Record summary:
Chemical mapping of a 207-nucleotide RNA with 2A3. It was measured as part of the RMDB library VIROID. As a SHAPE reagent, 2A3 marks flexible, mostly unpaired nucleotides at the ribose 2'-OH. The reactions ran in a buffer of 150 mM KOAc, 10 mM MgCl2 and 150 mM bicine (pH 8.5), at 24 C.
RNA sequence: GGGAACGACUCGAGUAGAGUCGAAAACAGUCGCGUGCUGACUCUCACGCCCACCCGCACGGCUGCUCCGAGAGGAGUGCUCUCUGCCGCUAGUCGAGCGGACCACAGAGUGACUCCCCUGCCCUAUUUUCUUCAGAGAGCCGGCGGUGGAGCCUCACACGUACGGUGAGUUCGCUCACCGUACGUGAAAAGAAACAACAACAACAAC
Reactivity to 2A3 in 0.01 (KOAc 150mM, MgCl2 10mM, bicine 150mM(pH8.5), 24C), signal-to-noise 1, nucleotides 027 to 156: c020a010g050u070c040g090c050g190u160g000c040u040g000a130c100u000c010u010c030a030c080g020c000c000c020a040c020c040c050g050c020a300c030g000g010c000u160g080c000u020c020c060g130a050g000a010g070g000a000g010u140g020c000u000c000u000c000u020g010c000c000g000c060u060a060g210u300c120g030a020g000c000g030g000a030c110c000a040c020a000g000a000g030u080g080a010c000u000c020c020c000c050u070g130c050c000c010u120a230u120u180u070u050c020u050u080c010a020g020a000g010a000g000c000c000g020g000c000g010g080u010g000g000a010g020c000c000u150c000a030